[RMDB]
RNA sequence: GGGAACGACUCGAGUAGAGUCGAAAAAGAAGCAACCCGCUUCUCGCCUCGUUAACAUGGAUGUUUUCAGGCAAAAAAUUCAAACUUUCGUCGCGUUACUUGCGCGACUUUGAAUGUGCGGGAUUGCAUUAGAUAAAAUGUUCGCAUUUUAUCUAAUAAAAGAAACAACAACAACAAC
Reactivity to 2A3 in 0.01 (KOAc 150mM, MgCl2 10mM, bicine 150mM(pH8.5), 24C), signal-to-noise 9, nucleotides 027 to 126: a000g140a060a010g000c000a000a010c000c000c010g000c000u070u010c050u030c050g000c000c010u030c100g010u000u010a010a010c010a060u180g300g050a180u170g150u000u010u000u000c000a000g000g000c000a010a050a030a020a010a020u040u030c040a040a030a050c100u150u220u220c070g000u000c000g000c000g040u060u110a210c110u260u300g010c000g000c000g000a000c000u000u000u000g000a010a000u040g030u050g020c000g000g030g040a070u000u020g000c000
Reactivity to DMS in 0.01 (KOAc 150mM, MgCl2 10mM, bicine 150mM(pH8.5), 24C), signal-to-noise 9, nucleotides 027 to 126: a090g010a120a120g010c000a010a010c000c000c000g010c000u010u020c110u010c140g010c000c000u000c220g020u000u000a000a010c010a120u030g020g010a150u030g010u000u000u000u000c010a010g000g010c010a000a010a060a060a060a020u000u000c010a010a020a070c300u010u020u020c180g010u000c000g010c000g010u000u020a110c300u020u030g000c000g000c000g000a010c020u000u000u000g000a010a010u000g000u010g010c000g000g000g000a120u000u000g010c000

An RNA of 177 nucleotides, treated with 2A3 and DMS and read out base by base. High DMS reactivity at an A or C suggests that its Watson-Crick edge is free. Reactivities are given for positions 27 through 126. High 2A3 reactivity points to a flexible backbone, as in loops and unpaired stretches. 2A3 adducts were read by reverse transcription with SuperScript II with manganese. The RNA was probed in 150 mM KOAc, 10 mM MgCl2 and 150 mM bicine (pH 8.5) at 24 C. For DMS the reverse transcriptase was MarathonRT.